RNA sequence: GGGAACGACUCGAGUAGAGUCGAAAAAUCAACAGUAAUAAUAUUGACUAACAUUUAUAAAAAUCAAAUGAUAUCAGUCACUCACUUAUCCUUCUCUCCAGUUUCAGCCAGGAAACAAGUGAAAUCGAGAUAUGAUAUCGCAUUUCUGCUUGUAAAACAUUAGUCGUCAUUUCGAUGACGACUAAUGAAAAGAAACAACAACAACAAC
Reactivity to DMS in 0.01 (KOAc 150mM, MgCl2 10mM, bicine 150mM(pH8.5), 24C), signal-to-noise 1, nucleotides 027 to 156: a070u000c020a000a100c000a070g000u010a080a150u010a130a210u000a110u000u000g000a080c000u010a050a110c010a100u000u010u000a100u010a060a080a020a130a200u030c040a070a020a130u010g000a040u010a030u000c050a040g000u000c020a110c170u030c030a060c010u000u000a090u000c010c010u000u000c000u010c000u010c010c060a210g030u000u000u000c020a060g030c060c110a150g020g000a090a130a040c050a020a030g040u000g010a000a030a050u000c170g010a080g010a020u000a140u000g030a050u000a030u000c020g020c030a020u000u010u010c020u000g120c000u000u000g000u000a110a070a080a130
Reactivity to 2A3 in 0.01 (KOAc 150mM, MgCl2 10mM, bicine 150mM(pH8.5), 24C), signal-to-noise 4, nucleotides 027 to 156: a000u110c040a000a060c030a040g080u100a050a160u140a190a020u070a100u180u060g030a030c030u040a140a000c030a060u070u190u110a170u300a140a160a090a040a020u120c060a030a100a090u120g020a020u020a020u110c030a010g030u020c020a010c030u030c010a050c010u020u070a030u090c020c000u090u020c060u000c010u000c030c030a040g020u010u060u080c080a090g010c100c000a010g050g000a010a110a070c040a020a000g000u010g060a000a050a010u080c050g070a030g020a110u160a080u230g040a050u060a020u100c020g040c040a020u020u040u030c040u070g050c020u020u020g040u100a030a160a010a000

Structure probing data (DMS and 2A3) for a 207-nucleotide construct. Values cover nucleotides 27 to 156. The reactions ran in a buffer of 150 mM KOAc, 10 mM MgCl2 and 150 mM bicine (pH 8.5), at 24 C. The data come from the RNA Mapping Database (RMDB), library OK3TST. The DMS profile rests on 1,449 reads.